Structure probing data (2A3 and DMS) for a 170-nucleotide construct. Source: RMDB library 15KLIB, as collected in RNAgym. In probing experiments dimethyl sulfate is read out at A N1 and C N3, which are open when not base-paired. The 2A3 profile rests on 54,977 reads. The RNA was probed in 150 mM KOAc, 10 mM MgCl2 and 150 mM bicine (pH 8.5) at 24 C.
[RMDB]
RNA sequence: GGGAACGACUCGAGUAGAGUCGAAAAGCUUAUGGCAAUUGCACAUUUGGUGCUCCAGAUGAUGCCUCUCGGUUACUUCAUACCGUGCUUGCAAAGGCUGAGUUAUGCUGUUCUGCACGCAUGGUUUAUACUUCUAGGUUCGCCUAGAAGAAAAGAAACAACAACAACAAC
Reactivity to 2A3 in 0.01 (KOAc 150mM, MgCl2 10mM, bicine 150mM(pH8.5), 24C), signal-to-noise 9, nucleotides 027 to 129: g020c020u180u160a080u270g060g000c030a070a200u150u100g010c010a010c010a060u050u050u140g130g010u170g080c080u050c020c000a020g010a050u080g040a090u050g020c010c000u030c010u020c010g110g040u100u120a130c030u120u170c060a040u060a080c000c000g000u000g000c000u000u000g000c000a030a040a060g010g000c010u040g060a100g270u250u160a120u250g020c010u020g110u190u060c060u020g000c010a000c010g000c000a010u000g000g000u000u030u000a020u010a020
Reactivity to DMS in 0.01 (KOAc 150mM, MgCl2 10mM, bicine 150mM(pH8.5), 24C), signal-to-noise 8, nucleotides 027 to 129: g030c040u020u050a060u040g030g000c050a080a210u030u020g000c020a020c000a080u030u040u000g010g000u040g000c250u030c030c020a000g020a000u020g000a120u040g000c000c070u000c000u000c040g040g030u010u030a000c130u020u020c100a070u000a000c000c000g020u000g020c010u000u050g010c000a020a030a190g020g040c050u000g050a170g020u050u040a040u060g010c000u000g030u020u010c180u020g020c000a020c030g020c000a030u000g000g000u000u000u040a030u000a130